[RMDB]
Source: RMDB library M2RFPK, as collected in RNAgym. The record gives the reactivity of an RNA of 207 nucleotides to 2A3 and DMS. For DMS the reverse transcriptase was MarathonRT. For DMS, 3,217 sequencing reads were counted. The reactions ran in a buffer of 150 mM KOAc, 10 mM MgCl2 and 150 mM bicine (pH 8.5), at 24 C. For 2A3, 3,697 sequencing reads were counted.

RNA sequence: GGGAACGACUCGAGUAGAGUCGAAAAUGAAGCAAAUCCAUAAUUGCCAAUGAUGAGCAAUUCGCUAUUGCCGCCUAAAAACGGUAAGCCGGGGCUGCUAGAGCCUUGUUACCAAAGAUAGCCGGCGUUACGGCAUGAUGGUUCGCCAUCAUGCCAACAUUCAUUUGCGAUUCGUCGCAAAUGAAUGAAAAGAAACAACAACAACAAC
Reactivity to 2A3 in 0.01 (KOAc 150mM, MgCl2 10mM, bicine 150mM(pH8.5), 24C), signal-to-noise 5, nucleotides 027 to 156: u140g030a060a000g040c030a050a030a110u080c050c020a060u090a140a030u040u020g000c010c020a120a150u260g100a150u090g020a150g040c010a010a020u040u070c040g000c050u080a080u130u170g000c010c010g000c020c010u080a100a070a020a010a010c050g010g000u010a000a000g090c110c030g010g000g010g000c010u040g040c090u150a070g070a010g260c000c000u000u010g030u020u010a000c000c000a040a080a000g120a040u030a010g040c040c020g010g010c010g040u050u090a050c100g000g020c000a000u000g000a000u000g010g040u040u090c190g010c060c000a000u000c000a000u000g000c000c000a000a000
Reactivity to DMS in 0.01 (KOAc 150mM, MgCl2 10mM, bicine 150mM(pH8.5), 24C), signal-to-noise 2, nucleotides 027 to 156: u020g000a120a140g000c020a060a040a160u010c060c050a150u000a100a060u000u000g010c000c020a070a210u000g040a240u000g010a130g000c040a040a060u000u040c000g000c070u000a090u000u010g010c000c020g010c010c000u020a020a050a100a130a070c110g020g020u000a020a070g010c100c060g060g000g010g040c030u010g030c100u000a140g000a070g040c010c020u010u000g010u000u000a100c030c030a120a090a130g010a190u020a110g000c050c120g000g030c040g000u010u010a080c110g010g000c000a000u010g000a000u000g010g080u000u000c300g010c030c000a000u000c010a010u000g000c010c000a000a020